[RMDB]
RNA sequence: GGGAACGACUCGAGUAGAGUCGAAAAAUAAAGAGUUUCCACGAACCAAAUAGGAACCAUAAGACUAGAAUAGGUGGUUCCUAUUUGGUUGACUUAACAAUUCCCUAGGAACCUGGAUGCAAAAAAACCUACUAUCAUACUUCGGUAUGAUAGUAGGAAAAGAAACAACAACAACAAC
Reactivity to DMS in 0.01 (KOAc 150mM, MgCl2 10mM, bicine 150mM(pH8.5), 24C), signal-to-noise 2, nucleotides 027 to 126: a060u010a070a070a110g010a090g020u000u010u000c020c040a140c200g000a050a010c000c010a000a040a030u000a000g010g000a010a030c010c000a010u010a090a090g020a190c140u010a050g000a090a120u020a050g000g050u000g000g000u000u000c000c010u000a000u000u010u000g000g000u000u000g010a060c050u010u000a040a050c130a070a130u000u000c000c000c000u010a130g010g010a030a080c060c060u010g000g020a080u010g000c080a010a010a080a080a040a090a080
Reactivity to 2A3 in 0.01 (KOAc 150mM, MgCl2 10mM, bicine 150mM(pH8.5), 24C), signal-to-noise 2, nucleotides 027 to 126: a000u160a000a100a030g110a030g030u000u090u000c030c010a020c060g000a010a020c000c000a000a000a000u000a010g010g000a000a010c010c000a030u080a130a200g100a190c120u150a080g240a290a170u120a160g020g170u000g000g000u000u000c000c000u000a000u000u000u000g000g010u000u000g000a000c000u000u040a000a000c040a030a140u040u030c020c010c000u030a060g090g000a040a030c020c000u020g080g040a040u100g040c090a000a040a020a020a030a040a150
Structure probing data (DMS and 2A3) for a 177-nucleotide construct. For 2A3, 2,290 sequencing reads were counted. The DMS profile rests on 2,231 reads. The data come from the RNA Mapping Database (RMDB), library M2PK90. Conditions: 150 mM KOAc, 10 mM MgCl2 and 150 mM bicine (pH 8.5), 24 C. For DMS the reverse transcriptase was MarathonRT.